[RMDB]
RNA sequence: GGGAACGACUCGAGUAGAGUCGAAAAGAUAUGGACUGGUGUAGGGAGUCGCUAAUCGGAAACGAUUAGGCGACGAGGAUCUACUCAGUCCUAAGUCAAAACUUGACGGCGUUCGCGCCGUCAAGAAGUGUAUUUUCUUGUUCGCAAGAAAAUACACAAAAGAAACAACAACAACAAC
Reactivity to DMS in 0.01 (KOAc 150mM, MgCl2 10mM, bicine 150mM(pH8.5), 24C), signal-to-noise 2, nucleotides 027 to 126: g000a030u000a050u010g000g000a010c000u000g010g000u040g000u000a000g010g020g010a060g020u000c000g000c000u010a000a000u000c000g010g000a020a020a070c000g010a010u000u000a030g030g020c000g020a000c000g020a070g010g000a130u010c000u000a000c000u000c000a010g010u000c000c010u000a000a060g000u000c000a180a080a100a230c000u000u010g010a020c000g010g010c000g030u000u010c290g030c020g010c000c000g000u000c000a000a000g000a050a100
Reactivity to 2A3 in 0.01 (KOAc 150mM, MgCl2 10mM, bicine 150mM(pH8.5), 24C), signal-to-noise 2, nucleotides 027 to 126: g000a010u010a020u050g000g010a020c000u000g020g020u230g090u080a010g020g000g090a160g000u010c000g010c040u020a010a000u010c010g010g000a010a010a000c000g010a010u000u020a080g090g230c020g000a010c000g020a080g050g000a060u010c000u000a010c010u000c030a000g000u000c000c000u000a000a000g000u010c010a010a040a120a260c000u000u000g000a000c000g000g020c010g050u060u080c100g040c000g000c040c000g010u000c000a000a000g000a020a010

Structure probing data (DMS and 2A3) for a 177-nucleotide construct. It was measured as part of the RMDB library TTRDES. Reactivities are rounded to 0.1 and cut off at 0 and 3.